[RMDB]
Overview: Chemical mapping of a 207-nucleotide RNA with 2A3 and DMS. DMS adducts were read by reverse transcription with MarathonRT. The RNA was probed in 150 mM KOAc, 10 mM MgCl2 and 150 mM bicine (pH 8.5) at 24 C. For DMS, 1,331 sequencing reads were counted. It was measured as part of the RMDB library OK3TST. DMS (dimethyl sulfate) methylates the pairing face of unpaired adenines and cytosines.
RNA sequence: GGGAACGACUCGAGUAGAGUCGAAAAGCAACAGAUAACUGGAUGCAGCGUAGGAUUCUACGCAUAUCCAGUACGAAUGGUACCUGUAAAGAAAAUAAGAUUGGAUGUACAAGUACCAACAAUUGGUUAAGCGAUGGUGAUGUCAAUCACAUUUGCAUCCCCAUUACCAUUUCGAUGGUAAUGGGGAAAAAGAAACAACAACAACAAC
Reactivity to 2A3 in 0.01 (KOAc 150mM, MgCl2 10mM, bicine 150mM(pH8.5), 24C), signal-to-noise 3, nucleotides 027 to 156: g050c020a010a090c000a010g060a120u100a140a110c010u020g000g000a000u020g020c190a130g000c110g000u000a010g050g060a280u300u180c000u010a000c000g020c000a000u010a000u020c000c000a000g020u030a030c020g090a020a130u040g000g000u000a000c000c000u000g020u030a080a000a040g100a020a130a000a020u130a070a030g100a230u020u040g030g040a050u090g020u060a010c000a000a000g000u000a000c040c010a020a070c050a000a200u100u080g120g000u070u070a130a000g010c030g010a000u050g020g170u010g000a010u050g030u150c110a060a020u000c010a010c010a040u010u020u180g000c000a020
Reactivity to DMS in 0.01 (KOAc 150mM, MgCl2 10mM, bicine 150mM(pH8.5), 24C), signal-to-noise 1, nucleotides 027 to 156: g030c040a100a160c090a030g020a100u000a080a110c020u000g010g000a080u000g070c290a190g050c000g000u000a010g010g000a300u000u020c000u000a000c010g070c000a270u020a000u000c010c000a000g040u000a000c020g000a100a140u000g040g000u000a060c060c000u000g000u030a020a040a100g020a300a220a050a080u010a050a200g000a300u000u000g020g050a300u000g000u000a010c080a000a000g010u000a000c000c010a110a040c120a070a080u000u010g000g030u000u000a050a030g070c000g020a010u000g030g010u000g000a060u000g020u010c300a080a030u010c000a040c000a150u020u000u000g060c020a280